[RMDB]
RNA sequence: GGGAACGACUCGAGUAGAGUCGAAAAUAUGUGAAUCGGGAUAUUCACGUCGACGCUCACAAUCGGGAUUUCGGGAAUGUCGACGCCGAUGGCGAGGUCGAUCAGACCCUGGUUGUCGCCCCGCCACCGGGAUUGCUAUGUUCGCAUAGCAAUCCCGAAAAGAAACAACAACAACAAC
Reactivity to 2A3 in 0.01 (KOAc 150mM, MgCl2 10mM, bicine 150mM(pH8.5), 24C), signal-to-noise 3, nucleotides 027 to 126: u250a050u110g080u050g030a010a030u080c080g010g070g000a040u080a100u300u090c060a080c030g040u000c030g000a010c000g050c060u050c020a050c060a100a220u130c070g070g080g130a160u020u110u250c060g020g020g030a090a190u180g000u050c000g010a010c010g000c000c020g080a040u050g000g020c000g030a040g000g000u020c000g010a030u070c010a000g120a230c000c050c040u020g070g000u080u090g010u020c060g020c010c000c000c000g020c010c020a000c000
Reactivity to DMS in 0.01 (KOAc 150mM, MgCl2 10mM, bicine 150mM(pH8.5), 24C), signal-to-noise 1, nucleotides 027 to 126: u080a090u000g100u000g010a040a000u000c050g060g010g000a150u020a060u010u050c060a300c010g000u020c000g000a040c010g000c040u000c040a040c080a000a260u080c010g000g000g020a100u000u060u060c130g070g000g040a020a070u040g010u000c020g000a010c210g010c000c060g030a010u010g010g040c040g000a010g020g000u000c000g000a010u040c140a020g000a150c030c040c030u020g000g060u000u000g000u000c130g000c040c000c000c000g010c020c080a050c150